Source: RMDB library OK3TST, as collected in RNAgym. Chemical mapping of a 207-nucleotide RNA with 2A3. Reactivities are given for positions 27 through 156. For 2A3, 1,409 sequencing reads were counted.

RNA sequence: GGGAACGACUCGAGUAGAGUCGAAAAGCGCAAUGGAGCAGACCACGGCAAAGGCGCUGCGCGAGGCGGUCAAGGGCGGCAAGGCAAGCCGCGAGGAGCUGGUCGCGCUGGGCAAACAGGUCUUUGACGAGGUCAAGGCGUCGAUCGCGCCGGAGGCCCUUAUAUGCACCUUCGGGUGCAUAUAAGGAAAAGAAACAACAACAACAAC
Reactivity to 2A3 in 0.01 (KOAc 150mM, MgCl2 10mM, bicine 150mM(pH8.5), 24C), signal-to-noise 1, nucleotides 027 to 156: g020c000g020c020a000a050u100g100g010a030g000c040a000g020a030c000c000a000c010g010g050c010a000a010a000g000g000c050g000c050u010g020c030g000c010g010a020g040g000c010g010g000u050c030a060a070g080g120g000c010g010g000c010a030a150g240g080c060a150a090g020c010c000g020c010g000a120g050g030a110g100c030u040g020g020u040c000g000c050g000c030u070g050g070g000c020a050a060a040c020a060g050g000u030c000u000u000u010g000a000c000g000a000g000g000u000c010a000a040g020g000c020g130u030c010g040a020u120c010g000c000g030c000c010g040g050a050g030g060c000